About this RNA
The record gives the reactivity of an RNA of 207 nucleotides to DMS. The reactions ran in a buffer of 150 mM KOAc, 10 mM MgCl2 and 150 mM bicine (pH 8.5), at 24 C. Reactivities are given for positions 27 through 156.

RNA sequence: GGGAACGACUCGAGUAGAGUCGAAAAGGGGUCCAUGAAGAUUACUUGGAUUUAGGAUACAAGCGAGAGUUUGAGGCAUACUGAAGCCUCCACGGUAUGCUACCCACCAAACUCUCGCUUGUAUCCUUGUCAGUAAUCGUAGUGGACGGAGGCACCCGUAAUAAAUUAUGUUCGCAUAAUUUAUUACAAAAGAAACAACAACAACAAC
Reactivity to DMS in 0.01 (KOAc 150mM, MgCl2 10mM, bicine 150mM(pH8.5), 24C), signal-to-noise 3, nucleotides 027 to 156: g010g000g020g020u000c010c010a020u000g010a210a300g000a030u000u000a000c020u000u010g040g010a140u000u000u000a020g010g010a050u000a000c000a020a020g030c000g000a030g010a040g020u000u000u000g000a170g000g000c000a020u000a030c010u000g010a020a100g030c010c020u000c010c010a120c050g010g000u000a000u010g020c010u000a040c000c010c020a300c070c000a010a010a010c000u010c000u010c010g000c000u000u010g000u000a000u000c000c000u010u030g010u000c080a030g010u000a000a010u000c000g010u000a300g020u010g010g000a030c030g020g020a050g000g010c010a120c010c020c020